[RMDB]
RNA sequence: GGGAACGACUCGAGUAGAGUCGAAAAAUCAGGCCCGCUUCCGUCGUUUCCGGCGUCGGGAGGGGCCAGGCCGGCGCCGCCAUGGCGAAUCCGGUCCGGCGUCCGUCGAUAACCGGGCGCCACGGAAGCUGAACCUAGGGUUCGCCCUAGGUUCAGCAAAAGAAACAACAACAACAAC
Reactivity to 2A3 in 0.01 (KOAc 150mM, MgCl2 10mM, bicine 150mM(pH8.5), 24C), signal-to-noise 1, nucleotides 027 to 126: a010u110c040a050g020g000c000c010c040g200c070u030u030c000c000g010u010c000g000u040u060u160c140c180g110g000c000g010u010c000g000g020g000a010g020g010g000g000c030c000a020g000g000c000c000g010g010c000g000c000c000g070c080c080a220u300g010g000c000g020a020a080u000c000c000g000g000u010c010c010g020g000c000g010u020c020c000g030u090c060g030a030u070a070a010c000c000g000g000g010c000g020c000c000a000c050g020g050a090a000
An RNA of 177 nucleotides, treated with 2A3 and read out base by base. 2A3 adducts were read by reverse transcription with SuperScript II with manganese. Reactivities are given for positions 27 through 126.